[RMDB]
RNA sequence: GGGAACGACUCGAGUAGAGUCGAAAAGAUAUGGAUCAAGGACGAUAAGUCCCGGUCGGAAACGACCGAGGACUUUUGACGUCCGUAGUCCUAAGUCAAAACCCACCCGGCUUCGGCCGGGUGGGAACGUGUGAUUGUAGUUCGCUACAAUCACACGAAAAGAAACAACAACAACAAC
Reactivity to DMS in 0.01 (KOAc 150mM, MgCl2 10mM, bicine 150mM(pH8.5), 24C), signal-to-noise 1, nucleotides 027 to 126: g010a010u020a120u000g000g020a010u000c020a300a240g000g000a000c000g010a230u010a010a010g000u000c010c010c000g020g000u020c000g050g020a030a060a070c010g010a000c020c010g020a060g030g000a000c000u000u020u000u020g020a060c000g020u010c000c000g020u020a170g000u000c010c000u000a020a150g000u000c020a070a070a140a190c010c000c000a030c000c000c000g000g020c000u000u010c270g020g000c000c000g000g000g020u010g000g010g010a000a010